[RMDB]
RNA sequence: GGGAACGACUCGAGUAGAGUCGAAAAUUAAAUAGCGUAAUCGACAUUGAGAAUCUACGCUAAGUGUGUGUUGUAUGGGCAACGUCCAAUUGAACACACACACAGUUGGACCUAAUGUCGAAAAAAACCACACCUAUCUGUUCGCAGAUAGGUGUGGAAAAGAAACAACAACAACAAC
Reactivity to DMS in 0.01 (KOAc 150mM, MgCl2 10mM, bicine 150mM(pH8.5), 24C), signal-to-noise 1, nucleotides 027 to 126: u000u000a050a080a050u000a060g010c080g000u000a060a080u000c020g000a000c030a010u000u000g000a060g000a050a160u000c150u000a020c170g070c020u000a080a130g010u010g030u020g030u030g010u000u030g020u010a110u010g030g030g000c000a060a180c300g030u000c050c000a030a120u020u000g000a030a000c000a030c000a000c020a000c000a050c190a020g010u000u020g000g000a080c030c030u000a000a020u000g000u000c000g020a000a000a020a080a180a050a000
Reactivity to 2A3 in 0.01 (KOAc 150mM, MgCl2 10mM, bicine 150mM(pH8.5), 24C), signal-to-noise 2, nucleotides 027 to 126: u170u080a000a000a120u160a060g030c080g050u050a030a110u030c000g000a010c010a020u020u040g050a010g000a080a060u030c030u010a010c050g010c070u020a150a080g000u040g000u000g010u010g000u000u060g100u100a080u040g010g000g000c100a300a070c170g010u000c010c020a040a090u040u120g100a030a000c000a000c010a000c000a000c010a010c030a000g050u070u050g040g040a000c020c000u040a010a000u000g000u020c000g000a110a020a030a000a000a000a000
Annotation:
The record gives the reactivity of an RNA of 177 nucleotides to DMS and 2A3. The reactions ran in a buffer of 150 mM KOAc, 10 mM MgCl2 and 150 mM bicine (pH 8.5), at 24 C. DMS adducts were read by reverse transcription with MarathonRT. Reactivities are given for positions 27 through 126.